[RMDB]
RNA sequence: GGGAACGACUCGAGUAGAGUCGAAAAGAUAUGGAACCUGUCGUUGAUCUCCCUGGUCGGAAACGACCAAGGAGGGAGAGAGGUUCCUAAGUCAAAAGGAGUACAUUCCUUCGGGAAUGUACUCCAAGUUCUGCCUAAAGUUCGCUUUAGGCAGAACAAAAGAAACAACAACAACAAC
Reactivity to 2A3 in 0.01 (KOAc 150mM, MgCl2 10mM, bicine 150mM(pH8.5), 24C), signal-to-noise 1, nucleotides 027 to 126: g010a000u090a050u100g020g000a010a000c000c000u150g220u260c030g150u300u040g050a040u010c000u000c000c010c000u000g000g000u000c000g000g040a050a070a100c000g000a000c000c000a000a010g020g000a000g000g070g010a030g000a000g000a010g000g010u010u050c000c000u000a000a000g070u020c020a010a010a020a180g020g000a010g000u010a000c010a010u000u000c000c000u050u150c300g040g000g010a000a000u000g000u010a010c010u000c010c000a010a010
Reactivity to DMS in 0.01 (KOAc 150mM, MgCl2 10mM, bicine 150mM(pH8.5), 24C), signal-to-noise 2, nucleotides 027 to 126: g000a030u000a300u000g000g020a000a000c000c000u000g000u000c000g010u000u000g000a040u000c000u010c000c000c020u000g000g000u000c000g020g000a100a070a170c000g000a000c010c000a000a010g000g000a040g000g050g000a010g010a020g020a010g010g000u000u010c010c000u000a010a070g020u000c050a100a080a140a120g010g000a040g000u000a000c000a020u000u000c000c000u000u000c230g020g000g000a000a000u000g000u000a000c000u000c000c000a020a020

The record gives the reactivity of an RNA of 177 nucleotides to 2A3 and DMS. The reactions ran in a buffer of 150 mM KOAc, 10 mM MgCl2 and 150 mM bicine (pH 8.5), at 24 C. It was measured as part of the RMDB library TTRDEL. For DMS the reverse transcriptase was MarathonRT. For 2A3, 2,948 sequencing reads were counted.